[RMDB]
Structure probing data (2A3 and DMS) for a 177-nucleotide construct. The RNA was probed in 150 mM KOAc, 10 mM MgCl2 and 150 mM bicine (pH 8.5) at 24 C. For DMS, 8,630 sequencing reads were counted. It was measured as part of the RMDB library OK1LIB. DMS adducts were read by reverse transcription with MarathonRT. 2A3 adducts were read by reverse transcription with SuperScript II with manganese.

RNA sequence: GGGAACGACUCGAGUAGAGUCGAAAAGAGGAGCAGGCUGAUAAUCUUGUGCAGUAUGCAUGCUCGUAACUCCAGCGCACAAGUGGAAGCACAAGAUUUUAAUCCAGCAUAGCGCAGGAGCCGCAGAAUACUGCAUGAGGUUCGCCUCAUGCAGUAUAAAAGAAACAACAACAACAAC
Reactivity to 2A3 in 0.01 (KOAc 150mM, MgCl2 10mM, bicine 150mM(pH8.5), 24C), signal-to-noise 4, nucleotides 027 to 126: g120a020g040g010a010g020c010a010g060g000c000u040g040a140u050a140a010u010c000u010u000g000u010g020c010a050g070u130a030u110g030c050a020u050g020c030u030c060g040u010a020a010c010u020c030c010a030g000c010g030c020a040c010a200a080g060u060g090g010a080a050g010c000a010c010a010a010g000a020u010u010u020u200a080a100u030c030c010a000g010c050a150u110a090g020c030g000c030a030g000g030a010g000c010c020g050c030a030g060a110
Reactivity to DMS in 0.01 (KOAc 150mM, MgCl2 10mM, bicine 150mM(pH8.5), 24C), signal-to-noise 4, nucleotides 027 to 126: g030a100g000g000a040g010c030a020g000g010c030u020g000a120u030a060a020u000c010u010u000g000u000g000c000a070g020u030a070u030g000c050a090u010g010c030u000c030g000u010a120a190c020u000c000c030a100g010c010g010c010a120c170a160a120g010u000g000g000a050a120g010c090a040c050a020a040g010a080u010u010u070u010a040a130u010c040c000a020g010c090a110u010a090g000c010g030c010a080g000g000a010g010c100c040g000c150a120g010a120